[RMDB]
Source: RMDB libraries RFM100 and RFMREP, as collected in RNAgym. Chemical mapping of a 177-nucleotide RNA with 2A3 and DMS. Conditions: 150 mM KOAc, 10 mM MgCl2 and 150 mM bicine (pH 8.5), 24 C. DMS adducts were read by reverse transcription with MarathonRT.

RNA sequence: GGGAACGACUCGAGUAGAGUCGAAAAUGAGGCGCAAGCCUCGCUGACGGCGUGGAAAGGGCUCUCUCUGAGGCCCGAGUACGCUGAAAGUGCCACAGAAACGUAGCUUUUCUGGCGACAGAAAAGAGAGGAGUCUAAUGUUCGCAUUAGACUCCUCAAAAGAAACAACAACAACAAC
Reactivity to 2A3 in 0.01 (KOAc 150mM, MgCl2 10mM, bicine 150mM(pH8.5), 24C), signal-to-noise 5, nucleotides 027 to 126: u100g000a010g000g020c010g010c100a060a080g000c000c010u000c000g000c010u010g000a020c010g020g010c020g030u050g050g060a170a110a120g040g000g000c040u060c000u000c010u010c150u300g020a020g010g000c000c000c000g000a000g000u010a000c000g000c000u000g000a020a000a000g030u040g040c000c020a190c020a050g140a030a130a010c110g100u140a060g080c010u000u000u000u000c000u000g030g000c020g020a000c000a000g030a010a040a010a000g100a000
Reactivity to DMS in 0.01 (KOAc 150mM, MgCl2 10mM, bicine 150mM(pH8.5), 24C), signal-to-noise 3, nucleotides 027 to 126: u030g010a010g010g040c030g010c260a090a240g010c000c000u000c010g030c040u010g000a300c010g000g000c000g030u020g010g020a100a080a300g000g010g000c020u090c000u010c040u060c110u060g010a010g010g010c000c000c010g010a070g000u030a020c030g000c000u000g000a020a270a000g000u000g000c000c000a110c220a070g000a080a090a060c140g020u050a090g020c000u000u000u000u000c000u000g020g000c250g010a170c010a000g010a000a020a040a020g000a170